This 177-nucleotide RNA was probed chemically with 2A3 and DMS. Values are in units of 0.01, from 0 to 300, in steps of 10. Reactivities are given for positions 27 through 126. The DMS profile rests on 1,348 reads. For 2A3 the reverse transcriptase was SuperScript II with manganese.
RNA sequence: GGGAACGACUCGAGUAGAGUCGAAAAGCAGCGGUCGGAAUACAAGAGUCCACGCUGCGCGGCGUGGUGGCCGACCUGGUCGCCAGCCCACGGCGGGCCAGCGCCUACGGCGUGUUCGCCGCAGGGCCCUAGCGCCCUGGUUCGCCAGGGCGCUAGGAAAAGAAACAACAACAACAAC
Reactivity to 2A3 in 0.01 (KOAc 150mM, MgCl2 10mM, bicine 150mM(pH8.5), 24C), signal-to-noise 1, nucleotides 027 to 126: g000c040a020g000c030g010g180u210c140g050g020a080a040u230a210c210a150a110g080a060g160u010c020c000a000c030g000c010u040g010c020g020c020g060g010c040g040u090g060g010u020g030g000c050c000g020a160c030c050u050g000g020u050c000g000c000c010a020g000c000c000c000a000c010g000g010c000g030g000g000c020c030a090g010c060g000c000c000u110a090c170g020g010c000g000u260g040u070u040c030g010c000c000g000c010a030g000g030g000c050
Reactivity to DMS in 0.01 (KOAc 150mM, MgCl2 10mM, bicine 150mM(pH8.5), 24C), signal-to-noise 1, nucleotides 027 to 126: g020c010a000g000c060g010g070u030c080g090g000a080a010u010a180c280a200a060g030a170g000u000c000c000a110c080g000c000u000g000c060g020c000g010g030c000g000u000g000g010u010g000g000c000c050g010a150c080c070u010g010g000u000c000g020c000c000a060g030c010c000c040a300c060g000g040c000g000g000g000c000c090a090g020c030g010c080c010u050a110c100g010g020c010g000u000g000u000u040c040g000c080c000g000c140a140g000g040g000c010
The reactions ran in a buffer of 150 mM KOAc, 10 mM MgCl2 and 150 mM bicine (pH 8.5), at 24 C. DMS adducts were read by reverse transcription with MarathonRT. It was measured as part of the RMDB library OK1LIB.